[RMDB]
RNA sequence: GGGAACGACUCGAGUAGAGUCGAAAAGACUACGAUGGAAGAGAUGGGAUGCUGUUCGAGACGAAAAACAGCAUGAUUCAUGUGAAAAAGCAUGAGAGUCUCGAACCGUCUCGAAACAUCGUAGGAAGGGAUAAGUAAACUUCGGUUUACUUAUCCCAAAAGAAACAACAACAACAAC
Reactivity to 2A3 in 0.01 (KOAc 150mM, MgCl2 10mM, bicine 150mM(pH8.5), 24C), signal-to-noise 5, nucleotides 027 to 126: g050a020c010u010a000c010g010a010u000g020g070a080a090g010a040g020a080u120g090g000g020a060u140g090c150u120g030u050u010c010g000a010g000a040c040g110a100a000a020a100a050c040a030g110c070a040u070g020a000u030u080c000a000u000g020u050g150a300a080a100a010a020g030c000a000u000g000a010g020a020g030u000c010u000c020g010a010a010c010c000g000u010c000u000c000g000a020a010a000c000a000u000c000g000u000a000g000g000a000a070
Reactivity to DMS in 0.01 (KOAc 150mM, MgCl2 10mM, bicine 150mM(pH8.5), 24C), signal-to-noise 3, nucleotides 027 to 126: g020a300c000u000a010c040g000a000u010g010g030a150a260g010a030g000a090u000g000g000g000a110u000g000c060u010g030u010u000c010g000a030g000a020c060g030a080a060a130a120a050c160a100g000c080a090u050g010a100u000u010c000a010u000g000u000g000a070a090a120a100a170g010c000a010u000g000a020g000a140g010u010c000u000c040g000a030a020c000c000g000u000c000u000c000g020a060a070a290c000a000u000c000g020u000a000g000g010a130a080